The record gives the reactivity of an RNA of 207 nucleotides to 2A3 and DMS.
Reactivities are rounded to 0.1 and cut off at 0 and 3.
For DMS the reverse transcriptase was MarathonRT.
Values cover nucleotides 27 to 156.

RNA sequence: GGGAACGACUCGAGUAGAGUCGAAAAAUCAUCUGAAGAUCAGCUAUUAGAAGAGAAAGAUCAGUCAAGUCCUUUGGACCUGAUCAGCUUGAUACAAGAACUACUGAUUUCAACUUCUUUGGCUUAAAAAAGGCCACAGAGUUCGCUCUGUGGCCAACACAAGUAAAGACUUCGGUCUUUACUUGUGAAAAGAAACAACAACAACAAC
Reactivity to 2A3 in 0.01 (KOAc 150mM, MgCl2 10mM, bicine 150mM(pH8.5), 24C), signal-to-noise 3, nucleotides 027 to 156: a010u060c030a020u030c070u180g070a140a060g030a170u080c040a010g030c000u050a070u270u070a200g010a050a010g020a030g030a050a050a000g030a010u010c000a000g020u060c040a110a010g010u010c000c050u100u170u230g040g010a030c000c030u050g030a100u060c030a000g040c020u050u090g010a020u100a220c030a040a040g020a090a050c010u100a020c010u100g020a050u010u010u050c050a120a090c010u010u000c010u020u030u020g020g000c010u030u030a000a080a000a010a030a060g000g000c010c000a000c000a000g020a000g030u080u090c140g040c100u000c000u000g000u000g000g000c000c000a000a000
Reactivity to DMS in 0.01 (KOAc 150mM, MgCl2 10mM, bicine 150mM(pH8.5), 24C), signal-to-noise 1, nucleotides 027 to 156: a090u010c120a110u000c050u000g000a170a170g010a180u000c140a070g030c000u010a080u000u000a030g000a020a030g020a080g000a260a150a040g000a050u000c000a000g020u000c040a140a010g010u000c000c000u020u020u010g090g000a050c020c020u000g000a160u000c060a130g000c100u000u000g010a160u000a090c090a000a110g020a040a050c010u000a080c010u020g010a060u010u000u010c000a120a300c010u000u000c010u000u040u000g030g000c050u000u000a020a040a050a140a120a100g010g030c000c010a010c000a010g000a060g000u000u000c300g040c060u000c050u040g000u000g030g010c010c010a000a050
It was measured as part of the RMDB library M2RFPK. The reactions ran in a buffer of 150 mM KOAc, 10 mM MgCl2 and 150 mM bicine (pH 8.5), at 24 C.